[RMDB]
RNA sequence: GGGAACGACUCGAGUAGAGUCGAAAAACGAUAACGAGGCGCUCGCUAUUGCUGCGUAACUGACGGCCUGACGGUCUGACGUCACAAAGCUAAAGCGCGGUUGGACCCCACCGGGCAACAGAAGGGGAAAGGCGACCCCGUUUCGACGGGGUCGCAACAAUAGGCUACAGUUCGCUGUAGCCUAUUGAAAAGAAACAACAACAACAAC
Reactivity to 2A3 in 0.01 (KOAc 150mM, MgCl2 10mM, bicine 150mM(pH8.5), 24C), signal-to-noise 1, nucleotides 027 to 156: a030c070g000a100u100a040a050c060g010a030g060g070c070g000c010u070c090g000c010u090a110u170u190g010c020u000g000c010g020u020a030a000c010u020g040a020c020g000g040c010c020u160g150a080c110g000g060u000c020u020g020a010c010g010u020c010a000c010a070a030a000g000c010u010a060a050a050g000c000g020c050g000g000u070u120g180g040a010c010c030c010c000a000c010c000g040g190g000c000a040a010c010a030g010a040a000g000g000g000g100a070a070a000g100g010c020g000a000c000c000c050c000g000u020u090u100c200g060a050c000g000g140g000g000u020c000g000c000a000a000
Source: RMDB library M2RFPK, as collected in RNAgym. This 207-nucleotide RNA was probed chemically with 2A3.